An RNA of 177 nucleotides, treated with DMS and 2A3 and read out base by base. The DMS profile rests on 3,319 reads. For 2A3, 4,492 sequencing reads were counted. DMS adducts were read by reverse transcription with MarathonRT. For 2A3 the reverse transcriptase was SuperScript II with manganese. The reactions ran in a buffer of 150 mM KOAc, 10 mM MgCl2 and 150 mM bicine (pH 8.5), at 24 C. Source: RMDB library M2PK50, as collected in RNAgym.
[RMDB]
RNA sequence: GGGAACGACUCGAGUAGAGUCGAAAACAUGGAUCGUUCGCGAUCCAUGGCAGGUGCUGGUGGGACCAGCCGACCCAGGCUUUUGGCAUCCCAGCCUUUCCAAUCCAGCCUAUUUCGAUAGGCUGAAGUAUCAGAACAACUUCGGUUGUUCUGAUACAAAAGAAACAACAACAACAAC
Reactivity to DMS in 0.01 (KOAc 150mM, MgCl2 10mM, bicine 150mM(pH8.5), 24C), signal-to-noise 3, nucleotides 027 to 126: c000a000u000g010g000a020u000c000g030u010u010c200g020c020g010a020u000c000c000a000u000g010g010c140a110g000g000u020g030c020u010g010g020u020g010g010g010a170c000c020a070g000c010c010g000a080c110c110c080a180g000g010c020u000u000u000u010g010g000c060a130u010c010c010c010a110g000c050c040u000u000u000c020c020a120a130u010c120c000a030g010c000c010u000a010u000u000u010c160g000a010u000a000g010g000c010u000g000a020a050
Reactivity to 2A3 in 0.01 (KOAc 150mM, MgCl2 10mM, bicine 150mM(pH8.5), 24C), signal-to-noise 3, nucleotides 027 to 126: c000a000u000g010g000a020u010c010g040u110u060c270g000c020g130a000u000c010c000a000u000g000g000c070a030g000g130u190g050c000u060g020g080u130g120g120g040a090c000c010a010g000c000c010g080a170c020c070c020a030g020g000c030u120u170u300u300g010g000c000a050u080c000c010c000a000g000c000c020u020u040u000c010c010a020a070u040c040c000a000g010c000c000u010a010u020u120u070c200g070a010u010a000g000g000c000u010g010a030a020